An RNA of 207 nucleotides, treated with DMS and 2A3 and read out base by base. DMS adducts were read by reverse transcription with MarathonRT. The reactions ran in a buffer of 150 mM KOAc, 10 mM MgCl2 and 150 mM bicine (pH 8.5), at 24 C.
[RMDB]
RNA sequence: GGGAACGACUCGAGUAGAGUCGAAAACUGUGCAGUUCGCUGCACAGAAAAAACCUUUGUGACGUCCCAUGGGAGAUGCUCCGUUCCCAUUGGGAACGGAAACAUCAUCGAUCAUGCGGACGUCACUCUGGUAAAAAUCUGCGAUUCGUCGCAGAAACCAGUUAACAGGUUUCGACCUGUUAACUGGAAAAGAAACAACAACAACAAC
Reactivity to DMS in 0.01 (KOAc 150mM, MgCl2 10mM, bicine 150mM(pH8.5), 24C), signal-to-noise 2, nucleotides 027 to 156: c000u000g000u000g000c000a030g030u010u000c290g050c010u000g000c000a030c000a000g000a000a050a110a080a080a010c000c020u000u000u000g020u000g000a040c010g010u020c010c000c000a020u000g000g000g000a300g020a020u000g010c090u030c000c000g020u000u000c000c000c010a300u040u000g090g020g030a000a000c010g010g020a010a050a020c020a060u000c020a170u000c090g040a300u000c020a030u000g000c130g050g000a030c000g000u000c000a000c000u000c050u000g020g020u010a040a050a080a080a090u000c000u000g010c000g000a090u000u000c270g040u000c000g040c000a010g000a000a060a100
Reactivity to 2A3 in 0.01 (KOAc 150mM, MgCl2 10mM, bicine 150mM(pH8.5), 24C), signal-to-noise 4, nucleotides 027 to 156: c000u030g000u000g000c010a010g000u040u150c160g130c160u020g010c000a000c010a000g000a010a010a000a000a000a000c000c000u020u010u010g000u000g010a000c000g000u000c000c000c000a000u000g010g000g010a070g000a000u000g010c020u010c000c000g000u000u000c000c000c060a220u210u300g000g000g000a000a000c000g000g050a000a090a000c070a070u250c000a020u050c010g030a040u080c000a000u010g020c170g010g000a000c000g000u000c000a000c000u000c000u000g000g000u040a000a010a000a030a050u020c000u000g020c000g020a030u040u090c200g040u020c000g110c000a000g000a030a000a010